[RMDB]
RNA sequence: GGGAACGACUCGAGUAGAGUCGAAAAGCCAUGUGACUUUUGUCGCAUGGCGACGACGUAGUUUUCUACGUCGGAUAUUAGCCAUCCGUUUGCCCAGGAUGGCCUAUCUGCCGAACAUGACUUUUGUCUUGUGAGGUAGUUAGUGAUUUGGGCGUCAACCUCAUUUACUAUUCGUAGUAAAUGAGGUAAAAGAAACAACAACAACAAC
Reactivity to DMS in 0.01 (KOAc 150mM, MgCl2 10mM, bicine 150mM(pH8.5), 24C), signal-to-noise 4, nucleotides 027 to 156: g010c000c010a010u000g020u010g010a030c010u020u000u010u010g040u000c000g050c000a010u000g010g010c000g010a010c010g010a030c000g030u000a010g000u000u010u000u010c030u000a010c010g010u000c000g000g000a120u010a070u000u010a140g030c000c010a020u000c000c000g000u000u000u010g030c020c010c030a300g010g020a020u010g000g050c010c010u010a020u000c020u000g000c000c010g000a300a040c030a030u000g000a050c010u000u000u000u020g030u000c010u000u000g020u000g000a300g010g030u000a010g010u010u000a020g030u000g000a200u010u000u000g010g010g030c020g000u000c090a150
Reactivity to 2A3 in 0.01 (KOAc 150mM, MgCl2 10mM, bicine 150mM(pH8.5), 24C), signal-to-noise 9, nucleotides 027 to 156: g000c000c000a010u000g010u000g000a010c030u090u100u260u300g000u000c010g000c000a000u000g000g000c000g000a000c000g000a000c000g000u020a020g010u040u130u240u210c010u000a000c000g000u000c000g000g000a060u080a090u080u230a020g000c000c000a000u000c000c000g020u050u100u240g000c000c000c000a000g000g000a000u000g000g000c000c000u000a000u000c000u000g000c000c000g010a010a000c000a010u020g010a010c020u110u160u250u300g010u010c000u010u020g000u000g000a020g000g000u000a000g000u000u000a000g000u020g090a110u140u200u230g000g000g000c020g020u050c050a030